About this RNA
Chemical mapping of a 177-nucleotide RNA with DMS. Reactivities are rounded to 0.1 and cut off at 0 and 3. For DMS the reverse transcriptase was MarathonRT. The DMS profile rests on 1,722 reads.
RNA sequence: GGGAACGACUCGAGUAGAGUCGAAAAGUUUUUAACGCGUGUGCACCCGCUAACACCAAUUACCCAGUUAUUUUCGACUUUACUCGAGUCGUUAUAGCGUGAGUUGGCGGAGUUCUCCGCGAAAUAACUUACCAGGGAUAUUCGUAUCCCUGGUAAGAAAAGAAACAACAACAACAAC
Reactivity to DMS in 0.01 (KOAc 150mM, MgCl2 10mM, bicine 150mM(pH8.5), 24C), signal-to-noise 2, nucleotides 027 to 126: g010u000u000u000u010u000a060a100c050g010c130g010u000g010u000g010c060a060c050c030c090g000c030u000a070a080c050a040c050c070a100a090u020u000a120c060c060c040a120g000u010u010a110u010u000u000u000c000g010a020c000u000u000u000a000c000u000c030g010a000g010u000c000g000u000u000a020u000a030g010c040g010u010g000a040g010u000u000g000g000c020g030g000a070g000u000u000c070u000c000c010g000c010g020a020a050a060u000a040a140